[RMDB]
RNA sequence: GGGAACGACUCGAGUAGAGUCGAAAAACUUCUGAUUAUAGAUGAAUGGCAUAGAGGUGUUAGAAAACAUGAGACAAAAGUAAUCUUCUUGAUGCUAGCGUCUCAGGUAAUUAGCAGGUACUAGACAGUAUGCUAGGAAGUUCGCUUCCUAGCAUACAAAAGAAACAACAACAACAAC
Reactivity to DMS in 0.01 (KOAc 150mM, MgCl2 10mM, bicine 150mM(pH8.5), 24C), signal-to-noise 2, nucleotides 027 to 126: a100c040u000u000c010u000g000a150u000u000a090u000a100g000a060u000g020a080a130u000g000g000c030a030u000a060g010a100g020g020u010g010u000u000a060g000a050a050a080a050c040a050u000g000a010g000a000c000a040a300a090a010g000u000a060a060u000c000u000u000c200u000u010g000a020u000g000c000u000a030g030c300g000u000c020u000c000a020g000g050u000a050a070u020u000a080g010c080a050g030g000u000a090c140u000a060g000a090c140a100
Reactivity to 2A3 in 0.01 (KOAc 150mM, MgCl2 10mM, bicine 150mM(pH8.5), 24C), signal-to-noise 1, nucleotides 027 to 126: a000c010u090u060c010u010g120a090u070u140a050u130a300g060a030u050g150a240a090u080g000g000c030a020u080a030g080a060g040g030u010g020u040u030a020g120a030a130a000a010c020a060u080g000a000g000a000c000a000a000a030a030g000u110a170a250u010c000u170u030c100u050u300g010a020u010g030c020u010a000g010c000g000u000c010u020c010a000g010g020u080a000a150u050u020a000g010c040a020g050g040u030a050c020u010a100g000a040c000a010